[RMDB]
RNA sequence: GGGAACGACUCGAGUAGAGUCGAAAAGCGGCCUUCACGAUUGCACCGCCUGGCUGUCGAUCAGGGCCAGCACGUCAGCGAAGCGGACCCAAUCGCCUGCACCGUCCAGAUAGAUCCCCUCGCUGUAAGACUUGGAGUAGCGCGGCAAAUGCCCCAGAACAUCAAAGCAUUUCGAUGCUUUGAUGUUAAAAGAAACAACAACAACAAC
Reactivity to DMS in 0.01 (KOAc 150mM, MgCl2 10mM, bicine 150mM(pH8.5), 24C), signal-to-noise 1, nucleotides 027 to 156: g020c000g000g000c030c000u020u000c080a100c030g010a070u000u020g010c070a150c040c020g010c080c050u010g030g010c000u010g000u000c030g030a070u020c040a120g010g010g000c030c010a090g030c070a100c030g040u000c010a090g000c030g020a060a130g010c030g000g030a090c000c040c030a090a090u000c020g020c030c040u020g010c100a180c080c010g000u000c030c020a210g010a130u000a110g000a160u010c000c030c000c050u020c030g000c010u000g040u010a050a150g010a080c020u000u000g030g000a110g000u000a110g000c080g000c070g000g040c060a010a100a080u000g000c010c020c000c000a050g010
Reactivity to 2A3 in 0.01 (KOAc 150mM, MgCl2 10mM, bicine 150mM(pH8.5), 24C), signal-to-noise 2, nucleotides 027 to 156: g030c060g000g000c000c020u090u100c110a100c090g080a080u030u120g030c080a020c080c050g130c070c020u030g040g000c050u010g070u210c060g050a160u000c070a090g020g030g000c000c010a000g000c050a020c020g080u080c000a010g000c030g030a090a020g000c090g030g050a100c080c000c000a020a040u050c030g000c010c000u070g010c030a070c060c030g060u060c060c020a000g090a180u160a070g100a140u110c020c010c000c000u000c000g000c000u000g020u050a050a060g020a060c000u010u110g030g010a020g010u080a020g030c130g000c000g060g000c010a030a000a160u070g040c000c000c000c000a000g040

The data come from the RNA Mapping Database (RMDB), library OK3TST. The record gives the reactivity of an RNA of 207 nucleotides to DMS and 2A3. The RNA was probed in 150 mM KOAc, 10 mM MgCl2 and 150 mM bicine (pH 8.5) at 24 C. Reactivities are given for positions 27 through 156. The 2A3 profile rests on 1,015 reads. For DMS, 2,348 sequencing reads were counted.